An RNA of 177 nucleotides, treated with DMS and read out base by base. DMS adducts were read by reverse transcription with MarathonRT. The data come from the RNA Mapping Database (RMDB), library RFMREP. Values are in units of 0.01, from 0 to 300, in steps of 10.
RNA sequence: GGGAACGACUCGAGUAGAGUCGAAAAAUGUGAUGCUUUGCUGGCUGGUGCAGUGCCUGAGGGGGUAAGAGCCCUGUUGUUGUAAGAUAGUGUCUUACUCCCUCAGGCACAUCUCCAGCAAGUUUAAGAUGUUAAAACAGUUCGCUGUUUUAACAUCAAAAGAAACAACAACAACAAC
Reactivity to DMS in 0.01 (KOAc 150mM, MgCl2 10mM, bicine 150mM(pH8.5), 24C), signal-to-noise 6, nucleotides 027 to 126: a090u010g010u010g010a120u000g010c040u000u000u000g020c010u000g010g020c090u000g000g020u000g010c270a100g010u000g010c000c000u000g010a020g020g000g010g000g000u000a010a010g000a110g020c060c070c020u000g020u000u000g010u000u020g010u010a140a190g000a020u000a020g010u000g000u000c000u000u000a020c010u000c000c000c000u000c000a000g000g000c000a000c000a010u000c020u000c000c010a010g020c010a010a010g010u000u000u010a110a160
Values cover nucleotides 27 to 126.